An RNA of 177 nucleotides, treated with DMS and 2A3 and read out base by base.
The data come from the RNA Mapping Database (RMDB), library M2PK50.
The reactions ran in a buffer of 150 mM KOAc, 10 mM MgCl2 and 150 mM bicine (pH 8.5), at 24 C.
DMS adducts were read by reverse transcription with MarathonRT.

[RMDB]
RNA sequence: GGGAACGACUCGAGUAGAGUCGAAAAACAAUCUGGUUCGCCAGAUUGUCAAUGUCUUCCUAAAAUCCUUGGAAGACUGUAUUUAUAGAAUAAAGGUCGAAAGUACCUGUGCUUUCGAGCACAGGAAACUGUAACGAAGGUUCGCCUUCGUUACAGUAAAAGAAACAACAACAACAAC
Reactivity to DMS in 0.01 (KOAc 150mM, MgCl2 10mM, bicine 150mM(pH8.5), 24C), signal-to-noise 3, nucleotides 027 to 126: a010c000a010a000u000c000u000g000g020u010u020c250g000c000c000a000g000a010u000u000g000u000c100a110a080u000g010u000c000u000u000c000c000u000a000a000a000a140u000c000c000u000u000g000g000a010a000g020a020c020u010g010u000a040u000u010u000a240u030a170g000a140a090u010a060a090a020g010g010u000c270g010a060a060a070g010u000a110c010c010u010g000u000g000c000u000u000u000c170g000a010g010c000a000c000a020g000g000a010a020
Reactivity to 2A3 in 0.01 (KOAc 150mM, MgCl2 10mM, bicine 150mM(pH8.5), 24C), signal-to-noise 3, nucleotides 027 to 126: a000c000a020a000u000c000u020g030g040u020u030c110g030c100c000a000g010a010u000u000g000u000c000a000a050u100g010u030c010u000u020c000c000u010a000a020a030a090u000c000c000u000u010g000g000a000a010g010a010c010u000g020u010a270u100u170u040a270u100a050g080a150a060u200a260a200a000g010g000u020c030g030a090a090a010g020u070a080c000c000u000g010u010g000c010u100u030u130c250g080a010g000c000a000c000a000g010g000a020a010